[RMDB]
RNA sequence: GGGAACGACUCGAGUAGAGUCGAAAAUUACUUCUUCAGCUAAUGUUUUUUGAGCUUCACGUAAAUGCGGUGCUUCAUUUUUAGAUUGUUCUAAGCGAUCAAUUUCUUCUUUUCCUAAGAAAGUAAACGAUAGUGGGAAGUUCGCUUCCCACUAUCGAAAAGAAACAACAACAACAAC
Reactivity to DMS in 0.01 (KOAc 150mM, MgCl2 10mM, bicine 150mM(pH8.5), 24C), signal-to-noise 1, nucleotides 027 to 126: u000u000a080c100u000u000c020u000u000c050a070g020c080u010a070a090u000g000u000u000u010u010u010u000g000a100g000c020u000u000c070a050c100g020u000a020a090a090u010g020c050g020g010u000g020c040u020u000c010a060u000u000u000u000u000a060g000a110u000u010g030u000u000c060u010a100a160g020c060g040a040u000c000a060a070u000u000u000c030u000u000c000u020u000u000u000c010c020u000a070a070g000a050a050a070g020u000a050a120a190

Chemical mapping of a 177-nucleotide RNA with DMS. The reactions ran in a buffer of 150 mM KOAc, 10 mM MgCl2 and 150 mM bicine (pH 8.5), at 24 C. For DMS, 927 sequencing reads were counted.